[RMDB]
The data come from the RNA Mapping Database (RMDB), library OK1LIB. The record gives the reactivity of an RNA of 177 nucleotides to 2A3. The RNA was probed in 150 mM KOAc, 10 mM MgCl2 and 150 mM bicine (pH 8.5) at 24 C.
RNA sequence: GGGAACGACUCGAGUAGAGUCGAAAACGGCAGUUCACACGCUGGCAGAUAAAAUCGAGGCUCGAGAUACAUUUUGUGUUGAGUGACCCGCGGAGAGAUUGGUAACAACUCUAAUUGCCGCGAUUGCGCGACCUAGUGCCUUCGGGCACUAGGUCGCAAAAGAAACAACAACAACAAC
Reactivity to 2A3 in 0.01 (KOAc 150mM, MgCl2 10mM, bicine 150mM(pH8.5), 24C), signal-to-noise 1, nucleotides 027 to 126: c030g030g000c000a000g040u070u110c100a040c030a000c080g060c000u080g000g050c000a030g030a040u140a110a200a000a070u060c010g000a020g100g000c000u000c000g050a070g000a000u040a110c030a110u020u080u140u190g070u000g000u000u150g030a120g040u050g020a140c010c000c010g000c010g000g010a010g000a030g010a040u000u010g000g000u050a180a000c040a050a000c010u000c000u060a050a050u140u080g010c000c000g050c040g040a020u000u250g060c040